Chemical mapping of a 177-nucleotide RNA with DMS and 2A3. For DMS, 12,593 sequencing reads were counted. For DMS the reverse transcriptase was MarathonRT. Source: RMDB library OK2TST, as collected in RNAgym. Conditions: 150 mM KOAc, 10 mM MgCl2 and 150 mM bicine (pH 8.5), 24 C.
[RMDB]
RNA sequence: GGGAACGACUCGAGUAGAGUCGAAAAGACGAUGAGCCGCCAAUGUAUGAUUUUACAUCGACGCCUAGCCUCGUUCAGCGAGGCAGAUCCAGUUAACCAUCGCGGAGUCGGUCUCUCGUCGCGGCUAAUUUAAUGCGUGAUUCGUCACGCAUUAAAUAAAAGAAACAACAACAACAAC
Reactivity to DMS in 0.01 (KOAc 150mM, MgCl2 10mM, bicine 150mM(pH8.5), 24C), signal-to-noise 9, nucleotides 027 to 126: g010a040c020g010a020u010g010a040g010c030c010g020c040c030a030a290u020g010u000a020u000g010a080u000u000u000u000a030c030a100u000c160g000a050c110g010c140c020u010a140g010c000c010u000c010g020u000u010c270a150g000c000g020a010g010g010c000a000g000a100u000c040c100a130g010u000u000a040a070c080c020a020u000c120g030c030g010g000a300g000u000c010g000g000u000c020u000c010u000c020g000u000c020g010c120g000g010c070u010a050
Reactivity to 2A3 in 0.01 (KOAc 150mM, MgCl2 10mM, bicine 150mM(pH8.5), 24C), signal-to-noise 5, nucleotides 027 to 126: g000a000c010g030a040u240g020a020g010c010c010g020c020c020a030a020u070g010u030a040u040g070a090u050u100u090u080a050c060a120u120c060g030a020c070g090c030c020u040a050g000c000c010u010c010g010u090u160c060a040g150c030g010a000g000g030c000a010g010a000u040c020c020a010g010u040u040a040a030c030c000a030u040c070g000c020g020g010a010g010u030c010g010g030u020c020u000c000u000c030g020u020c010g000c030g070g020c050u070a040